[RMDB]
RNA sequence: GGGAACGACUCGAGUAGAGUCGAAAAGUAUCCCUAAAUGAUAAAACACCGCACAUGGCUCGUAAGAGCGGUUAAAUUAGCAAGUAAUGCAAAUUACGCGAGGUAACGCAUGGCCUAGGCUCGUUAGAAAAGGGAGAAUCCUUCGGGAUUCUCCCAACCACUAAUGAUUCUUCGGAAUCAUUAGUGGAAAAGAAACAACAACAACAAC
Reactivity to 2A3 in 0.01 (KOAc 150mM, MgCl2 10mM, bicine 150mM(pH8.5), 24C), signal-to-noise 3, nucleotides 027 to 156: g050u030a090u040c000c000c010u070a100a110a100u160g050a020u130a050a080a000a010c040a020c000c020g070c000a050c040a190u090g060g000c020u030c050g070u070a060a030g040a010g090c010g000g010u010u010a030a040a060u080u090a020g030c070a100a060g050u120a050a060u090g000c040a100a100a100u050u040a040c040g010c020g030a010g010g020u040a050a000c010g000c060a050u090g020g000c000c000u010a030g010g020c010u000c030g060u030u060a050g090a060a060a040a050g000g000g000a010g000a000a000u000c000c000u010u060c130g020g010g000a000u000u020c000u000c000c000c000a010a000
Reactivity to DMS in 0.01 (KOAc 150mM, MgCl2 10mM, bicine 150mM(pH8.5), 24C), signal-to-noise 2, nucleotides 027 to 156: g040u010a110u000c000c020c000u000a060a050a060u000g020a120u000a050a060a120a090c060a050c000c060g000c050a210c020a130u010g020g030c030u000c050g000u000a140a110g020a080g030c010g010g000u000u000a030a070a120u000u010a130g030c050a080a070g020u000a060a050u000g000c130a100a090a090u000u000a030c050g010c010g000a050g030g030u000a040a060c030g000c110a060u000g020g000c030c010u000a150g010g030c040u010c070g000u010u000a160g010a060a080a090a120g000g020g080a060g000a030a000u000c010c010u000u000c300g070g040g020a010u000u000c000u010c000c000c000a000a010